[RMDB]
RNA sequence: GGGAACGACUCGAGUAGAGUCGAAAACGGCUUGUCGGCGUCGUUGUAGCUGCCGGUGACGUGGUGCAGACCGAUGACGCAGGCGCUGGUGCGCCGUGCCAUGUCGUGGAGGUAGUCCAUCAGAGACGUUUCGAUAUACGUUCGCGUAUAUCGAAACAAAAGAAACAACAACAACAAC
Reactivity to DMS in 0.01 (KOAc 150mM, MgCl2 10mM, bicine 150mM(pH8.5), 24C), signal-to-noise 3, nucleotides 027 to 126: c070g000g000c000u010u000g020u000c040g000g010c060g020u000c020g040u000u000g000u010a160g010c010u010g020c020c020g010g010u000g020a130c180g020u000g020g030u010g030c010a060g000a080c150c030g000a030u000g000a040c060g020c030a130g010g000c020g020c030u000g010g010u010g020c050g020c000c000g000u010g000c020c050a050u010g010u000c060g010u010g000g000a130g020g000u000a110g010u000c030c020a130u000c140a130g000a130g000a060c160
Reactivity to 2A3 in 0.01 (KOAc 150mM, MgCl2 10mM, bicine 150mM(pH8.5), 24C), signal-to-noise 2, nucleotides 027 to 126: c010g030g010c030u050u080g050u040c010g000g000c040g000u010c010g030u030u040g090u070a050g010c030u030g000c000c010g090g020u140g090a120c130g090u120g040g030u190g020c020a020g030a050c020c040g040a060u030g020a000c000g000c010a020g000g020c010g000c050u180g150g070u230g010c020g000c000c000g010u020g050c000c010a040u090g040u030c040g010u060g050g050a070g020g100u090a040g070u000c040c010a070u100c050a020g060a010g000a130c060
Overview: This 177-nucleotide RNA was probed chemically with DMS and 2A3. Reactivities are given for positions 27 through 126. 2A3 adducts were read by reverse transcription with SuperScript II with manganese. The data come from the RNA Mapping Database (RMDB), library OK2TST. For DMS, 4,098 sequencing reads were counted.